[RMDB]
RNA sequence: GGGAACGACUCGAGUAGAGUCGAAAAAAAGUGAGGUGCAUCGCCAAGUAUGCCAACAACAUGAUGAUGAUAUCGAUAAUUUGCGCAUGCUGACUUUGUUGGCGGCCUACAAACAGACAUGUUCCGUUCUAGGCGGAUGUGAAGCAUGCAUACCUUGGCCGCCACUCGUGUUCGCACGAGUGGCGGCAAAAGAAACAACAACAACAAC
Reactivity to 2A3 in 0.01 (KOAc 150mM, MgCl2 10mM, bicine 150mM(pH8.5), 24C), signal-to-noise 1, nucleotides 027 to 156: a000a000a000g130u040g000a000g010g000u050g020c090a090u060c100g130c000c010a000a000g000u000a000u020g020c010c000a000a000c000a020a000c000a020u000g050a020u020g000a000u000g020a000u070a050u300c170g120a160u060a290a110u060u050u270g120c300g000c040a100u120g000c000u000g000a110c100u130u050u080g000u000u000g000g010c020g010g010c000c000u000a000c000a010a010a010c150a000g150a000c050a230u170g060u000u180c110c000g000u060u060c150u060a000g000g020c020g110g070a000u110g020u010g110a060a000g050c000a000u110g080c000a000u040a200c000c020u100u060g040